[RMDB]
RNA sequence: GGGAACGACUCGAGUAGAGUCGAAAAGAUAUGGACUCCUGGGAGAAGCAUGUCGGAAACGACAUGACUUCGACGAUCAGGACAUGUCCUAAGUCAAAAGUGCUACUCGCUUCGGCGAGUAGCACAACGAUUUAACAUGGUUCGCCAUGUUAAAUCGAAAAGAAACAACAACAACAAC
Reactivity to 2A3 in 0.01 (KOAc 150mM, MgCl2 10mM, bicine 150mM(pH8.5), 24C), signal-to-noise 3, nucleotides 027 to 126: g000a000u020a000u040g000g000a000c000u000c010c000u020g020g000g000a040g000a000a000g000c010a010u000g000u000c000g000g020a020a000a000c000g010a000c000a020u020g030a050c020u000u000c000g030a080c000g000a000u000c010a000g060g020a050c200a220u250g000u000c000c000u000a000a000g010u000c020a010a000a100a130g000u010g010c010u000a000c000u000c010g020c040u080u130c290g130g010c000g000a000g000u000a000g000c000a000c000a000a000
Reactivity to DMS in 0.01 (KOAc 150mM, MgCl2 10mM, bicine 150mM(pH8.5), 24C), signal-to-noise 5, nucleotides 027 to 126: g010a020u000a010u000g000g000a010c010u000c000c000u000g010g000g000a010g010a010a000g000c000a000u000g010u000c000g020g010a010a010a020c000g010a010c000a010u000g000a080c010u000u000c010g000a090c240g000a130u020c000a000g000g000a020c300a040u010g010u000c000c000u000a000a100g000u000c000a080a070a120a090g010u000g000c000u000a000c000u000c000g020c000u000u020c190g020g000c000g000a010g010u000a000g010c000a000c000a010a070
Chemical mapping of a 177-nucleotide RNA with 2A3 and DMS. DMS adducts were read by reverse transcription with MarathonRT. Source: RMDB library TTRDEL, as collected in RNAgym. For 2A3 the reverse transcriptase was SuperScript II with manganese.